[RMDB]
RNA sequence: GGGAACGACUCGAGUAGAGUCGAAAAGCCGCACGUUACGCCGCGAACCCCGAGCGGUCGAUCGCCGAAGCUCACCUUACCGACGUGACCAGAGCGGAUGUGAACAGCCUGAUCCCGGUGGUGUCGGCAACGGGGCGGAUUUCGAUCCGCCCCGUUGAAAAGAAACAACAACAACAAC
Reactivity to DMS in 0.01 (KOAc 150mM, MgCl2 10mM, bicine 150mM(pH8.5), 24C), signal-to-noise 2, nucleotides 027 to 126: g060c000c080g000c020a050c070g000u010u030a030c120g020c100c010g000c000g010a100a170c060c020c000c010g000a100g000c100g030g010u000c050g000a060u020c040g030c120c020g000a250a030g000c090u020c030a030c040c040u050u000a140c000c030g000a040c020g000u000g020a100c030c010a110g000a050g030c070g050g010a130u020g000u020g000a080a080c020a140g020c050c020u000g030a070u020c030c000c050g020g000u020g000g040u000g000u000c040g030g090
Reactivity to 2A3 in 0.01 (KOAc 150mM, MgCl2 10mM, bicine 150mM(pH8.5), 24C), signal-to-noise 3, nucleotides 027 to 126: g040c040c000g000c030a080c080g120u150u140a020c010g010c040c010g000c000g010a090a090c010c000c010c000g050a020g040c020g040g010u080c030g020a060u030c020g000c020c000g100a060a020g010c030u060c060a030c010c000u060u080a060c000c000g040a060c040g100u180g070a030c030c000a030g040a020g030c020g020g000a050u160g010u020g090a080a090c020a010g010c000c010u040g030a050u050c010c010c000g000g060u010g010g010u050g000u050c010g000g030